[RMDB]
RNA sequence: GGGAACGACUCGAGUAGAGUCGAAAAGUGUGAAUAUGUGUGUGGCUCUGGUGUGUGCCCCUCCCUGACCUAGCAGGAGGUGAAAUGAAGUCUCUCUUAAAUAGUGCAUGUGAAUGGUUUGGGUCAGAAUCAGCCUCUCUUGGGUACGCUGGAGAGACUAGUAUUUACGGUUCGCCGUAAAUACUAGAAAAGAAACAACAACAACAAC
Reactivity to 2A3 in 0.01 (KOAc 150mM, MgCl2 10mM, bicine 150mM(pH8.5), 24C), signal-to-noise 7, nucleotides 027 to 156: g090u060g020u010g050a070a050u070a120u120g050u000g030u010g020u040g040g000c010u020c040u060g010g010u030g020u010g020u050g050c010c010c000c000u040c020c020c010u030g050a060c000c030u040a040g030c040a020g020g020a020g020g020u060g040a060a070a030u130g020a040a020g040u010c010u000c000u000c010u090u100a090a120a080u110a140g050u050g050c050a050u060g040u020g090a100a060u080g020g030u060u070u070g020g010g020u020c020a010g040a020a050u070c020a020g040c010c010u020c000u020c020u050u040g030g000g040u060a040c070g000c050u040g020g000a020g000a010g000a020
Reactivity to DMS in 0.01 (KOAc 150mM, MgCl2 10mM, bicine 150mM(pH8.5), 24C), signal-to-noise 3, nucleotides 027 to 156: g020u010g010u010g020a090a090u010a060u010g020u000g020u030g040u000g010g030c030u000c040u010g030g010u010g020u010g020u000g020c070c040c020c010u000c020c010c030u000g000a110c080c060u000a140g030c090a140g000g010a070g020g020u010g000a050a070a100u010g010a080a110g020u010c030u000c030u000c020u000u000a060a070a130u000a070g020u000g000c050a070u000g010u000g000a080a110u000g010g010u000u010u000g010g010g020u000c040a090g000a080a090u000c040a080g030c050c000u010c030u000c030u000u000g010g010g030u000a070c080g010c060u010g000g010a040g010a090g020a120